RNA sequence: GGGAACGACUCGAGUAGAGUCGAAAAAACGCAAUACUAAUACUAACACUUCUAUCCCUAGCAGGUUUACCACCCCUGACAGGUUUUCUCCCAAAAUGACUCAUCAUCCAAGAGCUCACUAAGCAGGAUCCGCACAGUUCUUCGGAACUGUGCGGAUAAAAGAAACAACAACAACAAC
Reactivity to 2A3 in 0.01 (KOAc 150mM, MgCl2 10mM, bicine 150mM(pH8.5), 24C), signal-to-noise 1, nucleotides 027 to 126: a010a010c160g000c070a030a060u090a160c060u300a230a080u140a200c070u080a220a000c000a070c050u040u050c030u100a100u050c000c000c000u050a030g000c000a010g000g110u000u030u040a040c020c000a000c000c000c000c000u040g010a030c000a020g100g000u000u020u050u010c070u050c000c000c000a090a070a000a050u080g010a000c000u000c110a020u030c010a010u180c060c040a270a150g020a080g070c050u050c010a110c040u130a140a000g050c010a060g040g050

Chemical mapping of a 177-nucleotide RNA with 2A3.
It was measured as part of the RMDB library OK1LIB.
The RNA was probed in 150 mM KOAc, 10 mM MgCl2 and 150 mM bicine (pH 8.5) at 24 C.